Chemical mapping of a 207-nucleotide RNA with 2A3 and DMS. The reactions ran in a buffer of 150 mM KOAc, 10 mM MgCl2 and 150 mM bicine (pH 8.5), at 24 C. 2A3 adducts were read by reverse transcription with SuperScript II with manganese.
RNA sequence: GGGAACGACUCGAGUAGAGUCGAAAAUCGCUGGGCUAUCUGUGAUGGUCGCAGAUAUCGCACCGAGGUCCUGAAGCGCGCACGGGACCGUUUGACGUGCGAUGUAGACUGCAUGGUAGCCUGUGCUGAAGCGCGCACGGCAACCGAAAGGUGCGAAGUAGUUAGAUUUGUUCGCAAAUCUAACUACAAAAGAAACAACAACAACAAC
Reactivity to 2A3 in 0.01 (KOAc 150mM, MgCl2 10mM, bicine 150mM(pH8.5), 24C), signal-to-noise 5, nucleotides 027 to 156: u040c000g000c010u020g000g000g000c010u010a000u010c030u080g140u100g200a300u180g090g000u010c010g000c080a000g010a020u010a000u010c000g000c000a000c010c020g030a060g000g000u000c000c000u030g040a200a080g000c000g000c010g000c000a010c010g010g000g000a010c020c000g020u230u200u170g030a020c010g000u000g000c000g000a000u010g010u000a050g010a020c020u030g030c060a110u120g010g000u000a000g000c010c000u000g000u000g000c000u020g010a140a050g020c000g000c000g010c000a000c000g000g000c000a000a000c000c000g040a040a020a030g010g000u020g000c010g000a080a040
Reactivity to DMS in 0.01 (KOAc 150mM, MgCl2 10mM, bicine 150mM(pH8.5), 24C), signal-to-noise 2, nucleotides 027 to 156: u000c020g000c010u030g030g000g040c030u000a000u010c000u000g040u020g010a180u000g080g030u010c010g040c140a130g020a070u000a030u000c030g000c010a010c010c000g000a070g020g000u000c010c040u000g010a080a040g050c020g030c010g000c030a300c040g020g000g000a040c000c010g010u010u000u000g020a120c140g010u000g000c000g000a030u000g010u010a040g000a080c000u000g010c030a090u010g000g040u000a040g000c020c020u000g000u000g000c010u010g000a080a090g010c020g030c020g020c010a300c050g030g010c010a060a070c010c010g010a080a130a120g000g030u010g000c000g000a060a170
For DMS the reverse transcriptase was MarathonRT.